An RNA of 177 nucleotides, treated with 2A3 and DMS and read out base by base. For DMS, 934 sequencing reads were counted. Conditions: 150 mM KOAc, 10 mM MgCl2 and 150 mM bicine (pH 8.5), 24 C. DMS adducts were read by reverse transcription with MarathonRT. Reactivities are given for positions 27 through 126.
RNA sequence: GGGAACGACUCGAGUAGAGUCGAAAAGAUAUGGAUGCCGUAUGCAAGUUGUAAUCGGAAACGAUUAUACAAUGAUGACCAUAUGGCAUCCUAAGUCAAAACCCAUGUGUCUUCGGACACAUGGGAACCCGUAGAUUUACUUCGGUAAAUCUACGGGAAAAGAAACAACAACAACAAC
Reactivity to 2A3 in 0.01 (KOAc 150mM, MgCl2 10mM, bicine 150mM(pH8.5), 24C), signal-to-noise 2, nucleotides 027 to 126: g000a020u010a020u090g010g000a000u010g000c010c010g020u020a000u000g060c170a220a240g000u060u020g000u030a000a000u010c000g020g000a020a010a040c020g010a000u060u060a130u100a220c020a000a040u150g100a260u300g110a170c110c000a000u030a000u030g020g000c000a000u020c000c000u000a000a000g000u000c010a010a030a100a300c000c000c000a000u010g010u000g000u000c020u020u090c300g170g000a020c000a000c000a000u000g000g000g000a010a020
Reactivity to DMS in 0.01 (KOAc 150mM, MgCl2 10mM, bicine 150mM(pH8.5), 24C), signal-to-noise 2, nucleotides 027 to 126: g090a040u020a280u030g000g000a090u000g000c000c000g030u000a000u000g010c100a090a090g020u010u000g000u010a040a010u000c000g000g000a090a040a250c000g020a020u000u000a100u010a040c010a090a020u020g010a070u000g010a230c300c030a070u000a010u030g000g000c000a050u000c000c000u010a000a050g020u000c040a120a060a170a130c040c000c010a020u000g010u000g010u010c000u020u020c300g030g020a020c010a000c000a000u000g000g000g000a000a020